[RMDB]
RNA sequence: GGGAACGACUCGAGUAGAGUCGAAAAGACCUUAACUUCGGUUAAGGUCAAAGAGCACUGAGCAGCGAAAGAAACGCUGCAAGCCGCAGUGCUCGGCAAUAAAAAGGGUGUUCUUCGGAACACCCAACUCAUGUAUGAUGUUCGCAUCAUACAUGAGAAAAGAAACAACAACAACAAC
Reactivity to DMS in 0.01 (KOAc 150mM, MgCl2 10mM, bicine 150mM(pH8.5), 24C), signal-to-noise 6, nucleotides 027 to 126: g010a010c000c000u000u000a000a010c000u000u010c200g020g020u000u010a000a020g020g020u010c000a010a040a080g000a010g020c010a000c000u000g010a140g020c000a000g010c000g010a080a140a180g010a140a100a140c010g010c000u000g010c000a040a050g010c180c170g010c010a010g010u000g010c000u000c000g010g020c200a060a060u010a020a050a100a100a070g000g000g020u000g000u000u000c000u000u010c200g020g010a020a000c000a000c010c000c000a000a020
Reactivity to 2A3 in 0.01 (KOAc 150mM, MgCl2 10mM, bicine 150mM(pH8.5), 24C), signal-to-noise 6, nucleotides 027 to 126: g000a000c000c000u000u000a010a010c000u030u060c180g070g000u000u000a000a000g000g000u000c000a000a010a000g000a000g000c000a000c010u040g030a010g040c000a000g010c000g060a080a230a140g220a130a270a010c010g000c000u000g000c000a000a000g060c010c030g010c010a000g000u000g000c000u000c000g010g060c050a050a080u170a170a090a030a020a030g000g000g000u000g000u000u000c000u030u060c230g060g000a000a000c000a000c000c000c000a000a000